[RMDB]
RNA sequence: GGGAACGACUCGAGUAGAGUCGAAAAAAAGGAGGCUAAUAAUGAGUUUGGUUUAUUUAUUAAUUGCUAUACUUGUGAUUAUGGCGAUGAUACUUCUAAUGUCUAAACGUAGAGCAUUGGCUAAAUACGACUUAAAUACAUUCGUGUAUUUAAGUCGAAAAGAAACAACAACAACAAC
Reactivity to 2A3 in 0.01 (KOAc 150mM, MgCl2 10mM, bicine 150mM(pH8.5), 24C), signal-to-noise 9, nucleotides 027 to 126: a000a000a000g100g020a040g030g000c040u040a060a020u060a100a080u170g030a030g080u030u070u080g040g010u070u130u060a050u040u070u020a110u030u110a260a060u040u030g000c010u010a020u010a070c030u100u190g080u140g160a090u120u070a020u070g020g000c010g010a020u030g010a010u030a080c030u050u040c020u070a060a060u060g040u030c030u050a070a130a060c090g100u090a050g010a010g080c020a030u020u050g050g000c010u050a030a060a060u160a040
Reactivity to DMS in 0.01 (KOAc 150mM, MgCl2 10mM, bicine 150mM(pH8.5), 24C), signal-to-noise 5, nucleotides 027 to 126: a070a070a060g010g010a120g000g020c040u020a030a050u010a080a090u020g000a100g000u000u010u000g010g010u010u010u000a030u010u000u000a050u010u000a030a040u000u000g010c000u000a030u000a030c140u010u030g020u030g000a090u010u000a030u000g000g010c010g000a010u000g000a050u000a030c090u010u000c080u010a050a030u020g010u030c020u010a030a090a100c190g000u030a060g010a040g010c080a040u010u000g000g010c050u000a020a040a090u010a140
Overview:
Structure probing data (2A3 and DMS) for a 177-nucleotide construct. The 2A3 profile rests on 15,991 reads. For DMS the reverse transcriptase was MarathonRT.